[RMDB]
RNA sequence: GGGAACGACUCGAGUAGAGUCGAAAAUACUAGAGCUCCUGGGAAUGCAUGGCCAGUGACACAAGUGAGAAUUGGAUGUUAUGACCGUCCAGAAAAGACAAGAUGAGAAAGUGCAGUAUUGACUGUCGAUAACUUGGAGUUUCGACUCCAAGUUAUCAAAAGAAACAACAACAACAAC
Reactivity to DMS in 0.01 (KOAc 150mM, MgCl2 10mM, bicine 150mM(pH8.5), 24C), signal-to-noise 7, nucleotides 027 to 126: u030a080c070u010a050g010a110g010c040u000c030c020u000g010g010g010a100a080u000g000c060a050u010g010g010c030c040a040g010u020g000a060c090a070c080a050a060g020u030g010a120g010a100a100u020u000g000g000a050u000g010u000u020a070u030g000a080c190c040g000u000c000c000a050g010a040a050a070a100g000a050c090a080a090g000a080u010g010a100g000a050a080a070g010u000g000c010a030g000u010a090u010u010g020a070c020u010g000u010c190
Reactivity to 2A3 in 0.01 (KOAc 150mM, MgCl2 10mM, bicine 150mM(pH8.5), 24C), signal-to-noise 7, nucleotides 027 to 126: u150a020c070u040a020g030a010g040c000u020c010c010u020g000g030g040a130a060u120g060c040a030u030g050g000c000c030a030g020u070g100a040c030a010c020a070a070g040u110g070a050g070a120a150u100u050g030g000a020u030g030u140u150a120u190g090a070c050c010g000u010c000c000a030g050a020a120a010a000g050a020c070a040a050g020a120u120g020a030g110a130a110a000g060u110g040c020a000g040u040a130u110u120g080a030c020u020g030u130c050